RNA sequence: GGGAACGACUCGAGUAGAGUCGAAAAUAAAAUCCAAAAAGGAUAUUUAGGGGGAUAGAAUUAUCAGUGUUGUUAAAUGUCCUAAGGGAACUGAGUGAGGUAAGAAUUGAAAAAAAGAGACCAUUGUAUUUGGCGAUUGGAACAUCAUUGAUGGCUACUCCUCCUAUUAUUUCGAUAAUAGGAGGAGAAAAGAAACAACAACAACAAC
Reactivity to DMS in 0.01 (KOAc 150mM, MgCl2 10mM, bicine 150mM(pH8.5), 24C), signal-to-noise 1, nucleotides 027 to 156: u000a050a070a140a210u000c010c000a100a050a130a130a110g000g030a070u000a030u000u000u000a090g010g010g000g050g020a160u000a110g030a200a090u020u000a050u000c030a100g030u000g000u010u000g020u000u000a030a030a060u010g030u000c000c030u000a090a090g030g000g020a090a030c040u030g010a090g050u030g000a050g050g020u000a080a150g020a120a150u010u000g000a000a000a020a060a050a080a300g010a120g020a060c050c030a050u000u000g020u010a080u000u010u000g010g010c000g010a150u000u020g000g000a040a040c060a030u000c060a100u000u010g000a120u000g010g020c040u000a150
Reactivity to 2A3 in 0.01 (KOAc 150mM, MgCl2 10mM, bicine 150mM(pH8.5), 24C), signal-to-noise 1, nucleotides 027 to 156: u030a000a020a000a020u060c040c070a060a060a020a000a300g040g000a110u140a200u070u090u200a050g010g010g010g000g010a010u040a090g130a120a160u190u140a080u130c040a020g020u010g000u030u010g010u000u000a040a060a080u090g010u000c010c010u010a070a060g130g000g060a010a000c010u130g000a000g040u040g000a000g000g040u040a120a000g000a080a110u210u110g110a080a080a040a000a190a000a000g120a000g000a010c040c110a000u120u000g130u070a160u090u160u140g050g000c000g070a080u010u020g050g020a020a000c000a000u020c020a020u000u180g010a020u190g160g060c000u140a000
Source: RMDB library OK3TST, as collected in RNAgym. The record gives the reactivity of an RNA of 207 nucleotides to DMS and 2A3. 2A3 is a SHAPE reagent: it acylates the 2'-hydroxyl of flexible nucleotides of all four kinds. The RNA was probed in 150 mM KOAc, 10 mM MgCl2 and 150 mM bicine (pH 8.5) at 24 C. The DMS profile rests on 1,854 reads. 2A3 adducts were read by reverse transcription with SuperScript II with manganese.